[RMDB]
RNA sequence: GGGAACGACUCGAGUAGAGUCGAAAAUAUACAUCAGAAGUCGGCACAACUCCCGACUCGCGGUGAGCGAUGCAGCGUAGCUGAGGCUACGCAGCUGCUGUGCGGAUGGCUAGCAAAAGCUAGCCUAGGAUGCACGGGAGUUCGCUCCCGUGCAUCCAAAAGAAACAACAACAACAAC
Reactivity to 2A3 in 0.01 (KOAc 150mM, MgCl2 10mM, bicine 150mM(pH8.5), 24C), signal-to-noise 2, nucleotides 027 to 126: u200a000u040a020c120a090u160c100a100g090a150a000g010u000c000g000g070c190a150c170a300a300c100u080c000c020c020g040a040c000u000c030g000c060g030g090u090g000a000g050c030g130a100u210g030c000a030g000c000g000u010a020g000c020u000g160a030g100g270c000u000a000c000g000c000a020g000c060u060g110c020u010g070u050g020c000g010g080a030u080g000g000c000u000a000g000c040a100a100a100a090g000c000u000a000g000c000c000u000a020
Reactivity to DMS in 0.01 (KOAc 150mM, MgCl2 10mM, bicine 150mM(pH8.5), 24C), signal-to-noise 1, nucleotides 027 to 126: u000a070u200a240c040a010u050c030a000g030a170a240g030u000c050g000g070c070a140c130a160a070c290u020c220c000c000g000a000c020u000c000g000c190g000g010u040g000a030g010c000g010a040u070g000c040a080g080c010g000u000a000g060c000u050g050a190g000g000c000u010a000c000g000c070a010g030c000u000g000c040u000g000u030g000c070g000g020a180u000g000g010c000u010a000g000c010a060a160a140a040g000c000u000a020g000c000c000u000a000